[RMDB]
RNA sequence: GGGAACGACUCGAGUAGAGUCGAAAAGAUAUGGACCCGAUAAGCAAGAAGGACAACAGCUCGGAAACGAGACAUGUCCGGAUUGCUUUUGACGGGUCCUAAGUCAAAAGGUCGGUUCGCCGACCAAGGGUGUAUACAUCUUCGGAUGUAUACACCCAAAAGAAACAACAACAACAAC
Reactivity to 2A3 in 0.01 (KOAc 150mM, MgCl2 10mM, bicine 150mM(pH8.5), 24C), signal-to-noise 1, nucleotides 027 to 126: g010a010u110a020u150g010g000a000c010c010c000g040a080u050a080a000g020c010a010a000g000a020a010g000g000a000c010a160a030c010a160g000c000u000c000g010g050a110a080a060c010g010a000g040a070c040a130u070g000u000c000c000g000g000a000u000u000g000c000u000u020u030u100g110a040c010g030g040g020u010c000c000u000a010a000g010u000c020a140a000a000a080g000g000u000c010g000g060u060u060c280g070c100c020g000a000c000c010a000a020
Reactivity to DMS in 0.01 (KOAc 150mM, MgCl2 10mM, bicine 150mM(pH8.5), 24C), signal-to-noise 3, nucleotides 027 to 126: g000a040u000a300u010g000g010a010c000c000c000g040a220u000a010a010g000c010a020a010g000a300a220g000g000a010c000a020a110c230a170g020c000u010c010g000g000a050a070a160c020g010a020g000a030c090a060u010g010u000c000c000g000g010a280u000u000g020c010u000u000u000u020g010a140c070g000g000g010u000c000c000u000a000a120g030u000c030a040a040a090a160g000g020u000c000g000g000u010u020c180g000c000c000g000a000c000c010a030a030

Chemical mapping of a 177-nucleotide RNA with 2A3 and DMS. Conditions: 150 mM KOAc, 10 mM MgCl2 and 150 mM bicine (pH 8.5), 24 C. 2A3 adducts were read by reverse transcription with SuperScript II with manganese.